[RMDB]
RNA sequence: GGGAACGACUCGAGUAGAGUCGAAAAUCAGCUUGCCCAGCGCGUUCGUGGUCAGGCCGGGAACCGGCGCGGUGUGAUCUGCCAGUUCGGCGAUCGUGGUGAUGCCGGCCUCAAGGAGCUUGUCGCGUAUCUUAUGCUUGUUCGCAAGCAUAAGAUAAAAAGAAACAACAACAACAAC
Reactivity to 2A3 in 0.01 (KOAc 150mM, MgCl2 10mM, bicine 150mM(pH8.5), 24C), signal-to-noise 6, nucleotides 027 to 126: u100c020a010g030c020u050u120g020c010c000c020a030g010c050g000c020g080u100u090c060g020u080g070g070u090c020a010g040g000c000c010g020g020g020a090a160c020c010g040g000c010g010c020g100g240u050g010u010g020a020u010c070u200g010c030c010a140g120u280u250c110g060g000c010g000a010u020c010g000u070g020g300u040g020a160u090g030c000c000g000g010c010c000u010c010a040a060g070g000a040g020c030u030u040g040u030c030g000c010g060
Reactivity to DMS in 0.01 (KOAc 150mM, MgCl2 10mM, bicine 150mM(pH8.5), 24C), signal-to-noise 8, nucleotides 027 to 126: u010c130a100g000c040u010u000g010c020c010c010a200g010c060g010c170g020u000u010c040g040u000g010g010u010c040a040g000g010c020c030g000g000g000a110a110c030c000g010g010c020g000c020g000g010u000g020u000g010a010u000c010u000g040c010c010a170g010u010u010c180g020g020c020g010a010u000c010g020u000g010g000u000g000a100u010g020c020c010g000g010c050c010u000c070a090a120g020g000a120g010c030u000u000g010u000c020g010c050g010